[RMDB]
RNA sequence: GGGAACGACUCGAGUAGAGUCGAAAAACGGCUUGCGUAAGCGGAUAAGCCGCGCCCAGAUUGCGUUCAGGGCUGUGAUUUUCGCCGCUCCAACCACAGCCAUGACGGCAAUCUCGUGCUCACCGCGGUUCGUGGUGAUGUUCGCAUCACCACGAACAAAAGAAACAACAACAACAAC
Reactivity to 2A3 in 0.01 (KOAc 150mM, MgCl2 10mM, bicine 150mM(pH8.5), 24C), signal-to-noise 4, nucleotides 027 to 126: a000c010g010g000c010u040u050g020c020g180u130a090a080g020c000g060g040a120u090a150a020g010c000c000g000c020g010c000c010c000a010g010a010u010u030g010c010g070u120u120c010a020g030g020g000c000u000g010u010g040a110u010u020u090u250c110g030c020c010g020c010u020c030c020a030a040c010c000a000c000a000g000c000c020a020u010g000a000c030g040g060c000a010a010u000c020u010c030g120u110g030c020u050c040a090c010c050g020c040g060
Reactivity to DMS in 0.01 (KOAc 150mM, MgCl2 10mM, bicine 150mM(pH8.5), 24C), signal-to-noise 1, nucleotides 027 to 126: a050c010g000g010c000u000u010g000c090g000u110a090a110g020c000g060g020a210u080a020a020g000c040c000g000c040g000c010c010c060a040g000a020u020u000g000c000g010u020u000c000a020g000g020g000c020u010g000u050g000a030u000u000u020u030c160g000c050c020g040c020u040c060c080a140a080c130c030a000c000a020g000c020c030a090u000g000a000c040g000g000c000a010a000u000c000u000c150g000u050g000c060u010c020a080c020c000g090c050g030